[RMDB]
RNA sequence: GGGAACGACUCGAGUAGAGUCGAAAACUUUAAAAUAAAAGAACAGUUUGCUUAACAGGAUAAGGUACGGUAUGAAUGCACAGCUUUGGGAGAGGUUUCCCAAAACCCCUCUUUAUCAUUGUCUUCUGCUUAGCUAAAAAGAUACCACAUGCAAUAACGCACUGUAAUAGUUCGCUAUUACAGUGCGAAAAGAAACAACAACAACAAC
Reactivity to 2A3 in 0.01 (KOAc 150mM, MgCl2 10mM, bicine 150mM(pH8.5), 24C), signal-to-noise 1, nucleotides 027 to 156: c000u130u160u190a080a170a070a130u150a060a030a030a090g110a120a000c090a090g050u050u070u030g050c010u030u030a120a060c010a060g050g030a110u100a160a030g000g100u000a030c080g010g020u040a070u060g050a090a050u140g010c040a030c000a070g060c010u140u150u140g000g000g020a050g000a000g040g020u000u010u050c060c000c000a000a000a040a080c000c010c000c010u000c000u000u150u050a100u030c040a010u010u150g000u030c000u010u080c000u020g040c040u040u010a020g000c000u090a000a010a010a010a010g050a050u040a020c000c050a020c070a030u090g030c010a010a130u030a250a000
An RNA of 207 nucleotides, treated with 2A3 and read out base by base. The RNA was probed in 150 mM KOAc, 10 mM MgCl2 and 150 mM bicine (pH 8.5) at 24 C.